The record gives the reactivity of an RNA of 207 nucleotides to 2A3 and DMS. The RNA was probed in 150 mM KOAc, 10 mM MgCl2 and 150 mM bicine (pH 8.5) at 24 C. DMS (dimethyl sulfate) methylates the pairing face of unpaired adenines and cytosines.
RNA sequence: GGGAACGACUCGAGUAGAGUCGAAAAUACCGGUAUCAUAAGAAAUGUGUCACUAUCAUGACCAAAUAUUGUAAGAAACUCCACACCGGACAGAAAGUCUUCCCGACGCUCUUUAACCGGGAACCAACUCGUAACUAUCUCGUCAACUUCAUCGGCACGAUGAUUAUGCAUUCGUGCAUAAUCAUCGAAAAGAAACAACAACAACAAC
Reactivity to 2A3 in 0.01 (KOAc 150mM, MgCl2 10mM, bicine 150mM(pH8.5), 24C), signal-to-noise 5, nucleotides 027 to 156: u120a020c010c010g000g020u120a100u220c070a100u100a240a030g100a110a100a090u150g120u030g010u030c010a020c090u130a130u270c070a100u100g010a020c010c020a020a070a050u170a060u060u100g060u050a090a070g050a150a110a030c020u030c050c010a050c000a030c020c000g030g000a040c020a030g150a050a090a020g040u000c030u020u000c000c000c000g020a040c030g030c020u060c020u070u120u080a080a070c040c000g030g010g000a040a030c020c000a020a050c030u020c050g040u020a060a040c040u030a090u110c050u030c060g060u020c020a050a080c080u100u090c040a060u130c020g030g000c090a010
Reactivity to DMS in 0.01 (KOAc 150mM, MgCl2 10mM, bicine 150mM(pH8.5), 24C), signal-to-noise 1, nucleotides 027 to 156: u000a090c000c000g050g010u010a110u000c080a140u030a060a080g000a120a120a160u000g030u000g000u000c030a050c080u000a140u000c080a180u000g010a050c000c030a080a180a090u000a100u010u000g030u000a120a220g000a150a030a110c070u000c000c010a100c030a100c000c000g020g010a150c050a140g000a110a030a100g010u000c010u000u000c010c020c010g000a070c030g000c080u000c070u000u010u000a050a070c030c000g030g000g000a010a030c060c030a090a120c060u020c030g020u010a080a190c030u000a070u010c000u000c010g020u010c030a080a030c050u010u010c020a060u000c020g000g000c130a280